[RMDB]
RNA sequence: GGGAACGACUCGAGUAGAGUCGAAAAAUAUCAAUAUAAUUGCAGUGUACACAUAUUUGAUAAUACAAAUAUAUGGCUAACUGUAUUUAUUGUAUUGUCUAGACACACGAAAACCGCAAUUUGACUAACUAGCAUGAGGAUUCGUCCUCAUGCUAGUAAAAGAAACAACAACAACAAC
Reactivity to DMS in 0.01 (KOAc 150mM, MgCl2 10mM, bicine 150mM(pH8.5), 24C), signal-to-noise 1, nucleotides 027 to 126: a050u010a090u000c010a020a050u000a030u010a030a000u010u020g010c010a030g060u000g020u000a230c060a040c050a010u000a020u000u010u000g010a030u010a110a140u020a110c010a000a000a060u000a000u000a040u000g000g000c150u010a090a120c010u000g030u000a020u000u000u010a030u010u000g000u000a000u020u000g000u020c100u000a060g010a090c130a060c040a070c080g000a030a020a060a070c090c060g010c130a040a090u000u000u000g000a050c140u010a050
Reactivity to 2A3 in 0.01 (KOAc 150mM, MgCl2 10mM, bicine 150mM(pH8.5), 24C), signal-to-noise 1, nucleotides 027 to 126: a000u070a000u110c000a000a030u070a040u050a180a030u040u050g000c000a000g020u000g030u080a010c050a000c010a010u040a060u230u040u120g050a070u070a300a060u110a100c010a040a000a000u070a000u070a030u090g060g030c010u080a130a070c010u250g010u000a040u030u110u010a140u000u030g000u000a020u000u020g000u030c030u050a020g140a100c040a000c020a000c200g030a000a090a000a230c010c030g000c110a090a050u100u040u100g070a050c070u070a080